[RMDB]
RNA sequence: GGGAACGACUCGAGUAGAGUCGAAAAUCUUCACAAGCAGCGGCAUGCAACCGGAGGCGUGCUUCGGCAUUCAAAACCACAAGGGUAAGUGGUUGCUCAAGAUCGCGAACAGGAAUCUCCACCUACCAUGCUGGUGAGCGUUCGCGCUCACCAGCAUAAAAGAAACAACAACAACAAC
Reactivity to 2A3 in 0.01 (KOAc 150mM, MgCl2 10mM, bicine 150mM(pH8.5), 24C), signal-to-noise 1, nucleotides 027 to 126: u000c030u180u270c040a150c040a240a050g030c010a000g000c020g010g000c010a000u050g010c000a050a050c020c000g000g070a060g000g050c020g000u000g030c010u000u030c040g110g000c000a070u000u050c030a000a220a090a050c000c000a010c040a150a230g280g150g010u140a160a000g000u000g000g000u000u040g000c020u030c040a000a000g010a050u160c030g010c000g040a050a000c000a000g000g050a080a040u040c030u010c030c000a020c000c000u000a060c130c000

This 177-nucleotide RNA was probed chemically with 2A3.